[RMDB]
RNA sequence: GGGAACGACUCGAGUAGAGUCGAAAAAGUUCUAGUCCUCACCUAAGAUCAGACUAACAUGGCCCUCAAAGGAAGAGCACUUGGUUGGGCUUUGUGGUGGGGAUCAGUGUCUCAUUUUUAGUCCCAAAUUAAAAACGAGAUUUUGGGCUGUACAUCAGAUUUAGUCACGUUUCGACGUGACUAAAUCAAAAGAAACAACAACAACAAC
Reactivity to 2A3 in 0.01 (KOAc 150mM, MgCl2 10mM, bicine 150mM(pH8.5), 24C), signal-to-noise 3, nucleotides 027 to 156: a000g060u070u060c020u010a000g010u000c010c000u000c010a000c000c000u050a120a070g020a160u150c070a060g100a220c070u050a050a020c030a060u040g030g000c000c000c010u040c060a080a090a040g050g000a060a070g070a040g060c070a020c120u040u020g030g020u100u030g000g000g000c000u020u030u060g030u010g000g000u010g030g000g000g000a000u010c000a000g000u010g040u020c000u000c060a060u110u120u060u060u160a040g070u100c000c010c000a000a030a000u080u070a060a030a020a020a030c080g050a090g010a160u010u030u020u060g000g020g000c040u040g060u100a100c030a130u110c070a040
Reactivity to DMS in 0.01 (KOAc 150mM, MgCl2 10mM, bicine 150mM(pH8.5), 24C), signal-to-noise 1, nucleotides 027 to 156: a060g020u000u010c030u010a100g010u000c010c000u010c020a040c030c020u010a090a150g000a100u000c050a100g010a110c000u000a040a090c050a100u000g000g020c030c010c000u000c040a070a070a150g040g010a160a110g000a110g030c100a060c050u000u000g030g050u000u000g000g020g010c010u000u000u000g020u000g030g020u000g020g010g010g000a000u000c040a070g020u000g000u000c010u000c000a070u000u000u000u000u000a030g000u000c030c060c110a060a020a120u000u020a010a030a020a020a020c010g010a070g010a140u000u000u010u000g000g000g060c080u010g020u000a050c080a180u000c080a300